[RMDB]
RNA sequence: GGGAACGACUCGAGUAGAGUCGAAAAGCGCUCCUGAACGUGACUUCAGAAGACGGGCGCCGACAAGUUAGAUUGUCAAGGGGACAGUGUAGUGACACUGGGUAAUCUAACUUACCAAUCCCCGGCGCGUUGAGUCACGUCAACAACCGUCGAGCGACAUAAAUCGUGCUUUCGAGCACGAUUUAUGAAAAGAAACAACAACAACAAC
Reactivity to DMS in 0.01 (KOAc 150mM, MgCl2 10mM, bicine 150mM(pH8.5), 24C), signal-to-noise 2, nucleotides 027 to 156: g030c020g010c010u020c010c050u000g020a060a030c030g030u010g020a050c030u010u000c120a100g020a170a170g030a070c030g000g010g000c030g000c050c040g000a070c090a030a040g010u000u010a050g010a100u010u010g000u010c030a150a100g040g000g020g010a300c010a080g020u000g010u000a190g020u000g030a220c030a020c010u000g000g030g000u000a050a040u000c010u000a020a080c050u000u010a060c050c030a120a110u000c100c040c010c000g010g010c030g020c100g030u010u010g000a080g010u000c020a020c040g020u000c010a040a030c040a040a070c080c030g030u000c040g010a080g030c030g000a270
Reactivity to 2A3 in 0.01 (KOAc 150mM, MgCl2 10mM, bicine 150mM(pH8.5), 24C), signal-to-noise 5, nucleotides 027 to 156: g060c020g000c000u010c020c030u020g030a050a010c020g030u020g020a020c010u110u060c250a150g030a290a000g020a110c030g030g000g020c000g000c000c000g040a060c080a080a000g010u010u010a000g010a010u000u030g050u080c060a190a180g050g000g000g020a010c010a010g000u010g000u090a280g150u230g220a010c000a000c000u040g050g000g040u030a000a000u000c000u010a010a010c000u010u020a050c050c060a040a060u030c030c020c000c000g000g000c010g000c020g030u050u090g020a000g010u020c020a010c020g010u010c010a030a070c020a040a070c010c010g040u050c030g000a020g020c020g040a040
This 207-nucleotide RNA was probed chemically with DMS and 2A3. For DMS the reverse transcriptase was MarathonRT. Reactivities are given for positions 27 through 156. The RNA was probed in 150 mM KOAc, 10 mM MgCl2 and 150 mM bicine (pH 8.5) at 24 C. For 2A3, 4,652 sequencing reads were counted.